[RMDB]
RNA sequence: GGGAACGACUCGAGUAGAGUCGAAAAACUUGUUUCGGACCCAUAGUCCGAAAGAUCUUUGUUGAUGGCGUGCCAUUUGUAGUAUCUUGUGGUUAUCACUACAAAGAAUUAGGUUUAGUCAUGAAUAUAAUCCGGAUCUUCGGAUCCGGAAAAAGAAACAACAACAACAAC
Reactivity to DMS in 0.01 (KOAc 150mM, MgCl2 10mM, bicine 150mM(pH8.5), 24C), signal-to-noise 2, nucleotides 027 to 129: a100c160u050u030g000u000u000u080c040g000g000a110c040c050c190a220u110a180g000u030c020c020g000a000a000a220g000a160u030c060u070u000u000g020u000u060g020a000u000g000g000c080g140u030g000c020c050a110u000u010u010g000u030a000g000u060a000u140c140u000u000g010u090g040g000u020u000a250u010c000a010c000u000a000c040a000a000a000g000a150a040u000u110a000g030g000u010u000u170a110g000u050c120a000u030g050a100a000u040a090u090a110a080
Reactivity to 2A3 in 0.01 (KOAc 150mM, MgCl2 10mM, bicine 150mM(pH8.5), 24C), signal-to-noise 1, nucleotides 027 to 129: a000c000u000u110g000u020u000u000c000g000g000a000c060c060c060a160u170a000g000u020c000c000g000a000a010a000g000a000u000c000u000u020u040g060u000u000g070a090u020g030g010c120g120u040g000c000c000a000u000u250u000g020u080a060g110u000a090u080c000u000u300g060u050g040g100u080u060a150u120c070a000c090u100a010c000a000a070a000g080a040a020u040u000a000g000g000u000u000u140a000g000u000c020a020u140g040a150a080u300a140u160a120a030

Source information:
Chemical mapping of a 170-nucleotide RNA with DMS and 2A3.